[RMDB]
RNA sequence: GGGAACGACUCGAGUAGAGUCGAAAAGGUUCGAGAUUCGUCUCGAACCAAAUAAAAUCAGCGGUAUAUAAUUAGCUCCCGUUACCGCUGAACGGGAGCAUAUGGUCACUUGUUUCGACAAGUGAAACUAUAACACGUCUUUCGAGACGUGUUAUAGAAAAGAAACAACAACAACAAC
Reactivity to 2A3 in 0.01 (KOAc 150mM, MgCl2 10mM, bicine 150mM(pH8.5), 24C), signal-to-noise 4, nucleotides 027 to 126: g030g000u000u000c010g000a000g000a020u050u100c150g040u030c080u000c010g000a000a000c000c000a000a010a000u020a000a030a000a040u010c000a000g000c000g110g140u020a040u000a010u010a120a190u090u140a050g000c010u000c010c000c000g000u010u020a180c010c010g000c000u000g000a000a000c000g000g000g010a010g010c000a010u090a060u130g140g020u030c000a000c010u010u020g030u030u130u090c210g090a010c000a010a000g000u000g000a020a010a000
Reactivity to DMS in 0.01 (KOAc 150mM, MgCl2 10mM, bicine 150mM(pH8.5), 24C), signal-to-noise 3, nucleotides 027 to 126: g010g010u010u000c000g010a010g010a040u000u010c200g020u000c000u000c000g000a010a000c000c000a020a060a050u000a060a050a100a110u000c010a000g010c010g020g020u000a060u000a030u000a040a040u000u000a120g020c010u000c000c000c000g000u000u000a080c010c010g010c010u000g000a010a010c000g000g000g000a020g040c020a070u000a020u000g010g010u000c000a010c010u000u010g000u000u000u010c160g000a030c010a000a010g010u000g010a010a060a170

An RNA of 177 nucleotides, treated with 2A3 and DMS and read out base by base. Conditions: 150 mM KOAc, 10 mM MgCl2 and 150 mM bicine (pH 8.5), 24 C. It was measured as part of the RMDB library M2PK50. For 2A3 the reverse transcriptase was SuperScript II with manganese.